Chemical mapping of a 207-nucleotide RNA with 2A3. High 2A3 reactivity points to a flexible backbone, as in loops and unpaired stretches.

RNA sequence: GGGAACGACUCGAGUAGAGUCGAAAAUCUCAUUCGUGAGAGCACUGGCGUACUACGAAGCGGACCGCAACAGCCUUAACACGCUCUCCCAAAUAGGAGAGCGGGAAAGAGGACAUGCUAGUACGCUUCGUAUCGCAUCAUAAAGCUUCGGCUUUAAGAUGUUGUGCUUGUUCGCAAGCACAACAUCAAAAGAAACAACAACAACAAC
Reactivity to 2A3 in 0.01 (KOAc 150mM, MgCl2 10mM, bicine 150mM(pH8.5), 24C), signal-to-noise 2, nucleotides 027 to 156: u010c040u030c010a100u180u120c300g120u130g080a070g010a030g030c030a020c230u170g090g000c020g000u120a120c010u000a000c120g040a000a010g010c000g000g010a030c000c070g010c000a000a040c010a270g040c000c000u020u040a060a000c000a020c020g000c000u020c000u060c010c020c050a180a300a110u300a050g020g000a000g020a010g000c000g000g000g000a040a110a000g080a000g000g000a050c020a080u050g000c000u000a020g020u000a010c000g000c000u000u000c000g010u000a000u010c000g000c000a100u090c000a000u050a000a050a000g000c020u010u050c160g120g000c030u000u070u100a000a120
Notes
Reactivities are rounded to 0.1 and cut off at 0 and 3. Conditions: 150 mM KOAc, 10 mM MgCl2 and 150 mM bicine (pH 8.5), 24 C.